RNA sequence: GGGAACGACUCGAGUAGAGUCGAAAAGCUGAGAAAUUCGUUUCUCAGCACUGGAAAUAAAGCCGAAAGGCUAGCCAUUCCUAAUUUGGCGAAAGCCUGGCAUGAGCCUCCACUUCGGUGGAGGCAACUACACAGGCUAGUUCGCUAGCCUGUGUAGAAAAGAAACAACAACAACAAC
Reactivity to 2A3 in 0.01 (KOAc 150mM, MgCl2 10mM, bicine 150mM(pH8.5), 24C), signal-to-noise 2, nucleotides 027 to 126: g000c000u000g000a000g000a000a090a020u130u130c160g080u030u000u000c000u000c000a000g000c010a020c020u000g060g090a020a160a180u160a100a260a010g000c010c000g080a090a070a010g000g000c000u010a000g000c000c000a030u050u070c000c010u090a190a270u140u110u050g000g000c020g060a130a050a010g000c010c010u030g040g010c110a100u160g010a040g000c000c000u050c000c000a020c000u030u070c210g030g000u000g030g000a000g010g000c010a000a000
Reactivity to DMS in 0.01 (KOAc 150mM, MgCl2 10mM, bicine 150mM(pH8.5), 24C), signal-to-noise 2, nucleotides 027 to 126: g000c010u010g010a000g010a030a000a030u000u010c190g040u000u000u000c000u000c000a020g000c000a020c110u010g030g000a070a090a120u000a060a160a040g010c000c020g010a130a120a110g000g020c000u000a050g000c010c030a070u000u010c050c030u010a050a080u000u010u000g010g000c000g010a110a110a190g030c030c000u000g030g000c110a080u010g010a230g000c000c000u000c000c000a010c000u010u000c130g050g020u000g010g000a000g000g000c000a000a010